[RMDB]
RNA sequence: GGGAACGACUCGAGUAGAGUCGAAAAGCUAGGCAUUUCGAUGCCUAGCGAGCGCAGAGUCUAUGCAUCUCUGAAUCACACUACAGCCGUGUCUAUGCGUGGGAGUAUCCCUCUUCGGAGGGAUAAAUCCCCUCUUGGUGUUCGCACCAAGAGGGGAAAAAGAAACAACAACAACAAC
Reactivity to DMS in 0.01 (KOAc 150mM, MgCl2 10mM, bicine 150mM(pH8.5), 24C), signal-to-noise 2, nucleotides 027 to 126: g010c000u000a000g010g010c000a010u010u000u010c180g010a010u000g010c000c000u000a000g000c000g000a040g030c090g000c050a040g010a050g000u000c080u000a050u010g010c120a080u000c010u000c020u000g010a110a110u000c100a070c060a060c050u000a100c120a050g020c060c040g010u010g000u000c030u000a060u000g000c060g030u000g000g010g010a090g000u020a010u000c000c000c000u000c000u000u010c180g000g000a010g000g000g010a000u000a000a100a140
Reactivity to 2A3 in 0.01 (KOAc 150mM, MgCl2 10mM, bicine 150mM(pH8.5), 24C), signal-to-noise 2, nucleotides 027 to 126: g020c000u010a000g000g000c010a020u050u030u130c230g080a000u010g040c000c000u010a000g010c000g000a010g010c100g000c000a010g010a010g050u040c060u090a150u220g000c000a090u040c030u020c020u060g030a070a030u070c020a010c020a010c080u170a050c030a030g030c000c030g040u020g040u000c020u070a080u120g030c040g040u040g040g050g000a030g010u010a000u010c010c000c000u020c020u030u040c170g090g010a000g000g000g010a000u000a000a010a010